[RMDB]
RNA sequence: GGGAACGACUCGAGUAGAGUCGAAAACUGAGGUAACCAAACAGAACGACUCAAUGCAGGACUAUAUUUCCUAUUCUAUACACUAAUUGGAUCCCUCCCAUUAUUAGUAGCACUCCUAUACCUACAACGGCAAAUCGGGGUUCGCCCCGAUUUGCCGAAAAGAAACAACAACAACAAC
Reactivity to 2A3 in 0.01 (KOAc 150mM, MgCl2 10mM, bicine 150mM(pH8.5), 24C), signal-to-noise 1, nucleotides 027 to 126: c140u090g000a010g000g060u050a020a020c000c030a020a020a030c010a090g030a100a000c000g090a030c000u000c270a000a000u150g060c010a000g000g000a050c060u030a030u090a100u260u020u020c000c040u000a000u130u050c000u180a230u010a130c050a000c000u010a000a000u090u010g190g000a080u060c000c000c000u100c000c000c000a000u210u210a000u000u090a190g060u040a090g130c030a000c080u030c030c000u000a000u120a140c030c000u100a120c000a080a080
Structure probing data (2A3) for a 177-nucleotide construct. It was measured as part of the RMDB library OK1LIB. The reactions ran in a buffer of 150 mM KOAc, 10 mM MgCl2 and 150 mM bicine (pH 8.5), at 24 C.